[RMDB]
RNA sequence: GGGAACGACUCGAGUAGAGUCGAAAAACAAGUGGUGGUAGUCCGCCACUCUAAGGGGACGCCGUUAGAAGAAGAGGCUAGGGGGUAUUCCGGUGUGGGAUACUUAGUAAUAUGCAACGCUAAUUGCUCAAGGAUAGAUGAUUCGUCAUCUAUCCAAACAAUAGUACAUCUUCGGAUGUACUAUUGUAAAAGAAACAACAACAACAAC
Reactivity to 2A3 in 0.01 (KOAc 150mM, MgCl2 10mM, bicine 150mM(pH8.5), 24C), signal-to-noise 4, nucleotides 027 to 156: a010c100a080a060g000u020g010g000u030g000g080u060a060g060u070c010c000g010c020c020a020c010u000c000u030a060a060g010g030g010g030a030c060g070c070c020g110u080u080a030g010a120a000g020a020a000g030a070g010g020c030u010a040g010g000g040g010g000u010a020u040u040c040c020g090g080u210g040u170g110g020g010a010u010a040c010u010u040a010g040u050a040a140u050a100u260g030c030a060a010c040g190c090u090a080a120u080u060g000c010u030c170a120a080g010g000a000u010a010g000a010u010g000a010u030u060c150g090u010c050a000u000c000u000a000u000c000c000a000a000
Reactivity to DMS in 0.01 (KOAc 150mM, MgCl2 10mM, bicine 150mM(pH8.5), 24C), signal-to-noise 2, nucleotides 027 to 156: a080c090a050a040g000u010g000g040u000g010g000u000a140g020u010c000c020g030c010c000a020c020u000c020u010a080a090g020g020g000g040a120c120g030c030c030g000u020u000a080g000a090a130g030a120a070g020a080g010g030c020u010a080g010g000g000g030g000u000a020u000u000c010c000g050g010u010g020u000g000g010g020a030u000a020c020u000u000a040g010u010a060a140u000a040u010g020c000a090a100c060g060c030u000a110a090u000u010g010c000u010c080a100a200g000g010a020u010a000g000a010u010g010a050u000u010c300g010u010c000a010u000c000u000a000u000c010c010a010a040